[RMDB]
RNA sequence: GGGAACGACUCGAGUAGAGUCGAAAAGAAAGAAGGCGUAAUCGCCGUGUACGAGCUCCACGAUCAAUGAUUUUCUCGCCAGGCGGCAUUGAUCGGACGUACCUCGGAUUGCCGCCUUACAAAGUUAAUACUAGAUUAAAUAAACCGUCUUGGCAAAGUACUAGUCAUCAUUCGUGAUGACUAGUACAAAAGAAACAACAACAACAAC
Reactivity to DMS in 0.01 (KOAc 150mM, MgCl2 10mM, bicine 150mM(pH8.5), 24C), signal-to-noise 1, nucleotides 027 to 156: g010a100a150a140g000a100a070g030g000c000g030u000a100a140u010c000g000c060c010g000u000g030u000a070c000g080a170g020c210u000c040c110a100c020g000a040u050c010a030a050u000g040a240u000u000u000u000c080u000c100g030c040c080a050g030g000c040g010g000c010a020u000u010g000a010u010c080g000g010a090c020g030u000a050c060c050u000c030g000g010a050u000u020g020c060c000g040c010c000u010u020a070c090a060a110a180g000u000u000a070a080u000a180c040u000a120g000a190u000u000a050a090a190u000a130a090a100c020c010g000u000c020u000u000g030g030c000a060a130a230
Reactivity to 2A3 in 0.01 (KOAc 150mM, MgCl2 10mM, bicine 150mM(pH8.5), 24C), signal-to-noise 4, nucleotides 027 to 156: g090a010a160a010g080a010a010g020g010c010g020u020a030a030u050c130g050c140c010g030u030g000u030a010c010g020a050g060c080u080c130c060a110c050g000a000u010c000a010a000u010g040a050u040u080u180u140c190u090c070g000c000c000a000g000g000c010g000g000c000a010u010u000g000a000u000c000g010g000a010c000g010u010a010c010c050u090c040g010g010a020u040u080g050c030c040g000c000c000u010u020a040c030a000a090a010g040u120u120a090a090u080a230c040u060a040g090a210u230u230a150a100a110u150a090a070a000c000c000g000u020c010u100u090g000g000c010a030a030a010